This 207-nucleotide RNA was probed chemically with 2A3.
The RNA was probed in 150 mM KOAc, 10 mM MgCl2 and 150 mM bicine (pH 8.5) at 24 C.
It was measured as part of the RMDB library OK3TST.
Values cover nucleotides 27 to 156.
Reactivities are rounded to 0.1 and cut off at 0 and 3.

RNA sequence: GGGAACGACUCGAGUAGAGUCGAAAAUGCCGACUACCUCACCGGCCUUGGUGGGGAGGAUGUGCUCCUCAAACACCUAGCAAGGCAGUCGAUCAUAAUCAAAGACGCACUGCUUGAUCGCAGCGAAGUGCCCAUCAGUGUGGAAGAGCUCAGCCGCUGUACCGUGAUGUUUCGACAUCACGGUACAAAAAGAAACAACAACAACAAC
Reactivity to 2A3 in 0.01 (KOAc 150mM, MgCl2 10mM, bicine 150mM(pH8.5), 24C), signal-to-noise 2, nucleotides 027 to 156: u130g030c040c000g050a050c010u130a160c000c000u040c020a030c040c000g270g000c170c070u110u120g000g020u020g020g050g040g000a020g030g020a130u040g130u080g050c040u000c020c020u030c030a110a180a010c020a060c050c000u030a010g030c010a040a010g050g000c000a000g020u040c000g060a260u020c010a100u050a190a050u070c120a130a100a030g060a040c000g010c070a000c000u000g050c020u000u070g000a050u070c060g000c000a040g000c140g090a150a000g040u050g000c000c010c000a050u080c020a000g020u000g060u080g220g050a120a000g010a020g040c030u020c080a010g000c040c000g020c030